The record gives the reactivity of an RNA of 207 nucleotides to 2A3 and DMS. It was measured as part of the RMDB library VIROID. 2A3 adducts were read by reverse transcription with SuperScript II with manganese. The 2A3 profile rests on 2,954 reads. For DMS, 1,766 sequencing reads were counted. The reactions ran in a buffer of 150 mM KOAc, 10 mM MgCl2 and 150 mM bicine (pH 8.5), at 24 C.
RNA sequence: GGGAACGACUCGAGUAGAGUCGAAAACUCCUCGAUUCGGACCGGCUCAUCUCGACAAGAGGCGGCAGUCCUCAGUACUCUUACUCUUUUCUGAUAAAGAGGAGACUGCUGGACCCGCCGCCCAAGUUCGAGCAUGAGCCAAUUUCCGAACGGGAGGCUAAACUCGUAUGUUCGCAUACGAGUUUAGAAAAGAAACAACAACAACAAC
Reactivity to 2A3 in 0.01 (KOAc 150mM, MgCl2 10mM, bicine 150mM(pH8.5), 24C), signal-to-noise 5, nucleotides 027 to 156: c000u000c000c010u110c090g260a300u000u010c000g000g010a030c040c030g000g000c000u000c000a010u000c000u000c000g010a000c020a110a090g090a180g070g010c000g010g000c000a000g000u000c000c000u020c000a040g000u120a300c020u000c010u080u170a230c010u060c030u070u140u130u060c220u240g140a230u160a300a030a000g010a000g020g000a000g010a000c000u010g110c030u020g000g000a020c030c060c130g000c000c000g000c000c000c000a040a020g040u090u020c000g000a000g010c020a000u000g000a000g000c000c000a010a000u000u010u000c000c000g000a000a000c000g000g000g010a000g030g000
Reactivity to DMS in 0.01 (KOAc 150mM, MgCl2 10mM, bicine 150mM(pH8.5), 24C), signal-to-noise 1, nucleotides 027 to 156: c030u000c020c020u020c080g040a220u000u000c030g000g020a090c300c280g020g080c060u020c000a030u000c000u020c000g020a090c030a270a190g040a120g000g000c000g030g060c080a100g000u010c000c000u060c060a090g010u000a130c050u020c000u000u000a300c000u000c000u000u000u000u000c060u000g000a170u010a000a030a020g000a040g000g000a040g020a060c020u000g020c150u000g030g010a040c000c020c150g020c010c000g000c000c020c010a150a180g040u010u000c010g010a010g120c120a010u010g020a040g010c000c020a000a000u000u030u000c010c000g040a050a030c050g000g000g010a000g040g010